Chemical mapping of a 177-nucleotide RNA with DMS.
[RMDB]
RNA sequence: GGGAACGACUCGAGUAGAGUCGAAAAGAUAUGGAAGCCGCCCUUUCGUCGUAUAUGGAGCUCCGGGAUCGGAAACGAUCCCAGGAGCUAUGAAGUAUACGACGAAAGUAACAAGCUUCCUAAGUCACCUAACUAGACUGUUCGCAGUCUAGUUAGGAAAAGAAACAACAACAACAAC
Reactivity to DMS in 0.01 (KOAc 150mM, MgCl2 10mM, bicine 150mM(pH8.5), 24C), signal-to-noise 1, nucleotides 027 to 126: g000a030u000a130u010g010g000a020a030g020c030c120g000c300c300c010u010u010u000c000g030u000c010g080u000a030u010a010u010g000g000a000g020c010u000c000c030g010g010g010a010u000c000g010g000a080a030a110c010g030a010u000c000c000c000a010g060g000a010g010c000u000a020u000g000a060a290g000u000a010u010a010c000g000a010c000g000a000a000a010g000u000a060a150c230a270a100g020c010u010u000c000c000u000a000a080g010u000c030a300